[RMDB]
RNA sequence: GGGAACGACUCGAGUAGAGUCGAAAACGAUGGUGCGGGUGAACGGGUCGUUGCAGCCGUUGGUGAGAUGGCUCACUGUGACGCCUGUUGAGAACCGGGUCUGCGGUGAAUAUUUCGCGAUCAUCGCCGUUUUACAUGCUUUCGAGCAUGUAAAACGAAAAGAAACAACAACAACAAC
Reactivity to 2A3 in 0.01 (KOAc 150mM, MgCl2 10mM, bicine 150mM(pH8.5), 24C), signal-to-noise 3, nucleotides 027 to 126: c020g020a040u040g000g030u050g030c020g030g020g030u080g060a040a010c010g000g020g180u260c090g020u000u020g000c020a000g020c040c000g010u020u040g040g120u250g040a100g010a030u060g020g010c040u040c050a120c070u060g010u030g020a000c000g010c000c000u020g010u020u040g040a070g000a030a040c030c030g000g040g090u070c110u210g050c000g020g010u020g020a070a010u110a060u100u080u170c040g000c040g070a020u030c000a000u020c020g020c050
Reactivity to DMS in 0.01 (KOAc 150mM, MgCl2 10mM, bicine 150mM(pH8.5), 24C), signal-to-noise 4, nucleotides 027 to 126: c060g000a040u000g010g020u000g010c010g000g000g030u000g000a060a040c010g010g000g020u020c050g040u000u000g010c040a050g010c030c030g010u000u000g010g040u010g000a300g010a070u010g000g010c220u010c140a150c150u010g010u010g000a030c020g000c040c000u000g010u010u010g000a100g010a140a050c010c020g000g000g000u020c140u010g010c020g000g000u000g000a070a120u010a100u010u000u010c020g000c020g000a030u000c010a020u000c010g020c100